[RMDB]
RNA sequence: GGGAACGACUCGAGUAGAGUCGAAAACUACAAGCUGUGGAAAAACCUGUUGAAAAAGGCUCAAAAAGUGGAUAACUUGCUGGGAUCAAGGUUAAAACUGGGUUUUUCGGAUGUUUUCCUAAGUAUUUGAGCUAUAUUCUUUCGAGAAUAUAGCUCAAAAAGAAACAACAACAACAAC
Reactivity to 2A3 in 0.01 (KOAc 150mM, MgCl2 10mM, bicine 150mM(pH8.5), 24C), signal-to-noise 2, nucleotides 027 to 126: c060u170a070c040a050a050g030c040u070g040u150g200g050a010a070a000a000a000c000c020u060g020u050u050g050a000a040a010a070a060g060g000c060u050c060a030a060a080a000a000g030u060g090g010a080u020a290a060c010u000u000g000c020u090g040g060g000a120u090c040a100a120g000g040u060u090a060a040a000a000c080u100g000g000g000u000u000u010u040u040c000g010g030a040u040g000u010u030u040u000c000c010u030a050a040g040u020a160u000u060
Reactivity to DMS in 0.01 (KOAc 150mM, MgCl2 10mM, bicine 150mM(pH8.5), 24C), signal-to-noise 2, nucleotides 027 to 126: c040u040a060c140a090a080g000c060u030g020u050g010g000a020a030a000a000a000c000c000u000g020u000u000g020a140a110a040a160a060g000g000c000u000c050a000a020a250a070a050g070u000g000g050a130u020a130a000c000u000u000g010c300u020g030g030g000a070u020c010a040a060g050g000u020u080a010a010a070a000c000u090g010g000g000u000u000u000u050u000c010g000g010a020u000g000u000u000u010u020c020c010u000a010a120g020u020a060u000u000